Chemical mapping of a 177-nucleotide RNA with DMS. The DMS profile rests on 856 reads. The data come from the RNA Mapping Database (RMDB), library M2PK50. For DMS the reverse transcriptase was MarathonRT.
[RMDB]
RNA sequence: GGGAACGACUCGAGUAGAGUCGAAAACGAAUAGAAUUCGUUCUAUUCGAAUGACUGCUAAAAGCAGAGUUGACUGCGCCGAGCAGAAACGCCAAAGGAAAAAGUAGCCCAGAUUCGUCUGGGCUAAAGGAAUAGCUUCUUUCGAGAAGCUAUUCCUAAAAGAAACAACAACAACAAC
Reactivity to DMS in 0.01 (KOAc 150mM, MgCl2 10mM, bicine 150mM(pH8.5), 24C), signal-to-noise 1, nucleotides 027 to 126: c000g000a010a010u010a030g000a030a040u010u010c230g010u000u000c000u010a010u010u000c000g010a190a090u040g020a220c030u000g000c010u000a010a020a080a090g000c010a010g000a170g020u010u000g000a110c020u000g000c000g000c060c060g000a070g010c040a030g000a070a100a090c080g000c020c040a030a070a050g000g020a030a040a070a180a140g040u000a000g000c010c010c000a010g000a010u000u000c220g000u000c000u010g020g010g010c010u000a020a010

DMS (dimethyl sulfate) methylates the pairing face of unpaired adenines and cytosines.